[RMDB]
RNA sequence: GGGAACGACUCGAGUAGAGUCGAAAAGAUAUGGAACAACGCGGUCCUUGAUUUGGUAUCAAGCUCACAGUCGGAAACGACUGUAGCUGACAACGCCACUGAUCAAGGACCGCGUUGUUCCUAAGUCGUUAGCUAAUCACUUCGGUGAUUAGCUAACAAAAGAAACAACAACAACAAC
Reactivity to DMS in 0.01 (KOAc 150mM, MgCl2 10mM, bicine 150mM(pH8.5), 24C), signal-to-noise 1, nucleotides 027 to 126: g000a050u000a270u000g070g020a010a070c000a000a010c060g030c000g010g000u020c000c000u000u000g000a040u000u010u000g000g110u000a230u000c160a160a030g030c000u000c300a000c000a100g000u000c000g000g000a260a170a300c000g020a010c010u010g010u000a030g000c000u000g000a090c300a030a150c080g000c020c000a010c300u000g000a000u000c000a010a030g000g000a000c010c010g050c050g010u000u000g010u030u000c000c000u000a000a050g030u020c060